Structure probing data (2A3 and DMS) for a 177-nucleotide construct. For 2A3 the reverse transcriptase was SuperScript II with manganese. DMS adducts were read by reverse transcription with MarathonRT. Conditions: 150 mM KOAc, 10 mM MgCl2 and 150 mM bicine (pH 8.5), 24 C. Reactivities are given for positions 27 through 126. For DMS, 1,617 sequencing reads were counted.
RNA sequence: GGGAACGACUCGAGUAGAGUCGAAAAUAUACAUCAGAAGUCGGCACAACUCCCGACUCGCGGUGAGCGAUGCAGCGUAGCGCGAGCUACGCAGCUGCUGUGCGGAUGGCUAGCAGAAGCUAGCCUAAUACGGUGCUCCAUUCGUGGAGCACCGUAUAAAAGAAACAACAACAACAAC
Reactivity to 2A3 in 0.01 (KOAc 150mM, MgCl2 10mM, bicine 150mM(pH8.5), 24C), signal-to-noise 1, nucleotides 027 to 126: u100a010u070a030c030a000u100c020a000g030a080a000g040u000c000g000g100c200a010c000a300a230c080u030c030c000c000g000a000c030u000c040g000c030g100g010u070g010a000g020c000g040a160u150g000c000a010g000c010g000u000a000g000c000g000c000g040a020g030c000u020a010c000g000c000a020g000c000u100g000c000u010g030u050g040c020g000g040a020u150g020g030c020u000a000g020c000a010g030a210a000g010c000u000a000g000c000c000u000a010
Reactivity to DMS in 0.01 (KOAc 150mM, MgCl2 10mM, bicine 150mM(pH8.5), 24C), signal-to-noise 2, nucleotides 027 to 126: u010a060u010a260c050a090u020c000a060g020a110a070g000u010c000g010g060c200a070c060a150a260c200u000c140c010c000g000a050c080u000c020g000c300g050g040u050g000a050g010c000g010a100u050g000c010a010g000c000g000u000a000g010c010g020c300g040a200g000c000u140a000c010g000c050a030g040c040u050g040c040u000g020u000g010c010g010g040a050u020g000g040c000u000a000g000c000a080g000a120a040g010c000u000a000g000c000c000u010a000